[RMDB]
RNA sequence: GGGAACGACUCGAGUAGAGUCGAAAAUCAAACGAUUUCGAUCGUUUGAAACGGACCACUCCUGCGGGAGUUAAGGCCAUACGGACAGCCGCGUCCACUGCCAGUCAUUCGGUUUCGACCGAAUGAACGGCACUUACUCCUUCGGGAGUAAGUGCCGAAAAGAAACAACAACAACAAC
Reactivity to 2A3 in 0.01 (KOAc 150mM, MgCl2 10mM, bicine 150mM(pH8.5), 24C), signal-to-noise 2, nucleotides 027 to 126: u030c010a010a010a000c000g000a010u020u110u150c210g080a020u010c000g040u010u010u000g010a010a000a010c050g060g000a020c010c020a030c020u000c000c010u040g030c230g090g000g000a000g000u050u130a020a040g020g000c020c010a070u060a090c090g040g020a000c000a030g100c010c040g130c100g010u000c000c020a030c050u080g060c030c010a020g080u040c000a020u000u000c000g020g010u070u020u100c220g060a030c020c000g000a000a000u000g000a020a010
Reactivity to DMS in 0.01 (KOAc 150mM, MgCl2 10mM, bicine 150mM(pH8.5), 24C), signal-to-noise 1, nucleotides 027 to 126: u000c000a020a020a010c000g000a030u000u000u030c190g000a000u000c000g010u000u000u020g000a010a090a120c190g010g010a150c010c060a130c040u010c000c000u010g030c130g010g020g000a000g000u000u000a000a060g070g020c000c090a090u000a090c170g000g000a050c030a120g030c080c060g020c140g050u000c000c050a150c160u020g000c010c030a080g010u000c010a020u020u000c000g010g010u020u000u000c110g030a020c000c000g000a000a000u000g020a020a010
Notes
Source: RMDB library M2PK50, as collected in RNAgym. Chemical mapping of a 177-nucleotide RNA with 2A3 and DMS. For DMS, 817 sequencing reads were counted. The 2A3 profile rests on 1,591 reads. Reactivities are given for positions 27 through 126.